Structure probing data (2A3 and DMS) for a 177-nucleotide construct.
High 2A3 reactivity points to a flexible backbone, as in loops and unpaired stretches.
The reactions ran in a buffer of 150 mM KOAc, 10 mM MgCl2 and 150 mM bicine (pH 8.5), at 24 C.
DMS (dimethyl sulfate) methylates the pairing face of unpaired adenines and cytosines.
Source: RMDB library OK2TRN, as collected in RNAgym.
[RMDB]
RNA sequence: GGGAACGACUCGAGUAGAGUCGAAAACGGCUGUUAUUGCGGCUGGUGCUGAUGCCGCAACAGCAAGGGAGGCUAUUGGCGCGGGAACAUCCAGCCUUGCGAUCGGUACAACCGCUACUACCGCAGCCAGCCAGGGAAAAUUCGUUUUCCCUGGCUGAAAAGAAACAACAACAACAAC
Reactivity to 2A3 in 0.01 (KOAc 150mM, MgCl2 10mM, bicine 150mM(pH8.5), 24C), signal-to-noise 1, nucleotides 027 to 126: c010g020g020c000u000g020u110u080a290u170u110g010c010g050g000c030u060g020g070u100g050c080u100g020a030u100g050c030c000g000c010a000a020c020a020g050c020a000a000g060g000g000a080g010g000c010u070a040u110u120g060g000c100g000c070g100g020g010a080a050c030a130u050c050c030a000g010c000c000u000u060g060c020g050a090u120c040g000g000u070a040c020a040a030c090c040g000c000u000a030c010u030a040c010c000g030c020a000g020c020
Reactivity to DMS in 0.01 (KOAc 150mM, MgCl2 10mM, bicine 150mM(pH8.5), 24C), signal-to-noise 2, nucleotides 027 to 126: c120g020g000c010u000g010u000u000a130u010u000g020c020g010g000c010u000g010g030u010g020c050u000g020a110u010g010c060c000g000c010a020a030c130a030g020c030a050a100g000g000g000a110g000g000c100u000a120u010u010g010g000c080g000c030g000g000g000a050a100c080a080u000c060c030a130g010c030c100u000u000g000c020g000a070u000c060g030g040u010a030c100a110a110c070c080g010c090u000a100c110u010a090c050c050g000c060a060g010c070